[RMDB]
RNA sequence: GGGAACGACUCGAGUAGAGUCGAAAAGCGCGGGCCGUCUGGGCCACUCCUCGCCGCAGGGCGCCCGACGCCUCUGGCCGCGCCGGUUGGCGCGGACUUGUGCGGUCCGGCGCGGAUCGGCUGCGCAACCGUAGUAUGCAUUCGUGCAUACUACGGUAAAAGAAACAACAACAACAAC
Reactivity to 2A3 in 0.01 (KOAc 150mM, MgCl2 10mM, bicine 150mM(pH8.5), 24C), signal-to-noise 2, nucleotides 027 to 126: g000c000g010c030g000g020g040c020c030g030u040c030u050g010g100g010c000c000a050c050u070c000c020u050c040g040c000c010g050c050a040g030g060g000c020g000c020c100c020g080a090c000g010c000c000u060c040u010g010g000c040c010g000c010g000c010c010g230g170u230u300g060g000c000g000c020g020g020a030c010u080u120g060u070g030c020g050g050u040c060c080g020g000c090g000c010g030g010a060u160c040g020g000c010u040g000c010g000c010a010
Reactivity to DMS in 0.01 (KOAc 150mM, MgCl2 10mM, bicine 150mM(pH8.5), 24C), signal-to-noise 2, nucleotides 027 to 126: g010c030g020c010g000g010g020c010c010g020u010c030u000g000g000g030c010c030a060c170u000c100c100u010c200g000c030c050g010c070a110g000g010g020c060g020c000c070c100g000a170c030g020c000c010u000c110u010g000g000c000c000g000c000g010c010c000g020g020u010u000g020g020c010g010c000g000g000a010c030u000u000g020u000g010c020g000g000u000c130c090g010g010c010g020c010g000g000a010u000c020g000g010c020u010g010c010g000c010a130